The record gives the reactivity of an RNA of 177 nucleotides to DMS and 2A3. DMS adducts were read by reverse transcription with MarathonRT.
RNA sequence: GGGAACGACUCGAGUAGAGUCGAAAAACUGCAUCUACGGAUGCAGAACUACGUUCAUCCAAUUUAUUUGGACGCAUGAAAUGAGAAUAGGGAACGGGAUUCUCAUACGCAGGCUACGGCCUGCGAACUUUUUCAUUCUAUUCGUAGAAUGAAAAAGAAAAGAAACAACAACAACAAC
Reactivity to DMS in 0.01 (KOAc 150mM, MgCl2 10mM, bicine 150mM(pH8.5), 24C), signal-to-noise 5, nucleotides 027 to 126: a120c000u000g000c000a010u000c000u000a090c240g030g000a010u000g010c000a000g000a090a110c100u010a080c020g010u000u000c000a300u000c000c010a010a010u010u020u020a090u050u000u000g010g000a010c050g010c030a050u010g010a100a090a030u010g010a000g000a020a000u000a020g010g000g020a010a020c020g020g000g000a050u000u000c000u000c000a030u000a170c010g000c010a000g010g010c000u000a100c190g020g000c000c000u000g000c000g000a010a060
Reactivity to 2A3 in 0.01 (KOAc 150mM, MgCl2 10mM, bicine 150mM(pH8.5), 24C), signal-to-noise 6, nucleotides 027 to 126: a000c000u000g000c000a000u000c010u020a040c240g130g000a000u000g000c000a000g000a010a010c040u110a030c000g000u000u010c010a010u000c010c000a020a020u090u210u180a200u120u080u070g000g000a010c000g030c040a060u190g100a130a200a040u020g000a010g010a010a000u020a020g060g010g010a010a000c000g000g000g010a000u000u000c000u000c000a010u030a030c010g000c000a000g000g000c000u030a100c250g100g000c010c000u000g000c000g000a010a010